[RMDB]
Overview: An RNA of 207 nucleotides, treated with 2A3 and read out base by base. For 2A3 the reverse transcriptase was SuperScript II with manganese. The 2A3 profile rests on 785 reads. The RNA was probed in 150 mM KOAc, 10 mM MgCl2 and 150 mM bicine (pH 8.5) at 24 C.
RNA sequence: GGGAACGACUCGAGUAGAGUCGAAAAACAGGAACGGUGCACUACGGUGCACCGCUCCUGAACUAGUCUUGCACACAAUGGUAAGCCAGUAGUAAUGACAGUGCAAGUAGGUUAUUACUAUAUUAAAAACAGUUUUAUCACUUCGGUGAUAAAACAACAGUGCAUGACAGUUCGCUGUCAUGCACUGAAAAGAAACAACAACAACAAC
Reactivity to 2A3 in 0.01 (KOAc 150mM, MgCl2 10mM, bicine 150mM(pH8.5), 24C), signal-to-noise 1, nucleotides 027 to 156: a000c030a030g000g000a000a000c000g000g000u000g020c000a010c030u060a070c210g090g000u000g000c000a000c000c000g030c000u000c000c000u010g000a000a000c000u050a060g020u000c000u010u000g000c000a000c000a010c010a040a290u120g130g070u160a070a030g010c010c030a100g070u060a000g010u000a060a000u000g000a000c020a000g010u000g000c010a010a000g010u040a070g000g020u010u000a030u030u000a010c000u000a010u040a050u200u300a120a040a030a020a000c020a020g000u010u000u000u000a000u000c000a000c020u030u090c140g160g030u000g000a000u010a000a000a000a000c000a000a000